[RMDB]
RNA sequence: GGGAACGACUCGAGUAGAGUCGAAAAAGGUGUGGCCGCUGUGUCAUAUGUGUGUCAAUAGGUGGCAGGGAGGAGAGUGACUAUGUCUAUGCUCAGUGUUCUGACCCAUGAACAUCAGAGUGAUUAGUGUUAUUAUACCAUUCGUGGUAUAAUAACAAAAAGAAACAACAACAACAAC
Reactivity to 2A3 in 0.01 (KOAc 150mM, MgCl2 10mM, bicine 150mM(pH8.5), 24C), signal-to-noise 9, nucleotides 027 to 126: a000g100g020u080g010u040g040g010c020c010g040c100u050g030u020g020u080c030a030u050a120u160g150u020g010u010g020u040c030a060a080u070a120g060g010u040g050g000c040a030g030g030g010a060g020g020a040g000a010g040u060g020a020c020u060a070u140g060u010c020u040a070u170g010c000u000c010a020g010u000g010u030u000c010u020g120a130c010c010c020a030u070g010a000a010c010a020u070c050a040g020a010g040u040g030a060u030u110a040g050
Reactivity to DMS in 0.01 (KOAc 150mM, MgCl2 10mM, bicine 150mM(pH8.5), 24C), signal-to-noise 9, nucleotides 027 to 126: a060g010g010u010g020u010g010g010c030c030g020c080u010g020u010g010u010c040a050u010a070u020g010u010g020u010g010u000c050a060a100u020a090g010g020u000g000g010c040a080g000g000g010a090g000g010a070g000a090g010u010g000a090c070u010a060u010g010u010c050u010a080u020g000c010u000c010a180g010u000g000u000u000c010u000g010a170c040c040c030a090u010g000a010a020c020a020u000c070a100g000a030g020u000g000a120u010u010a060g010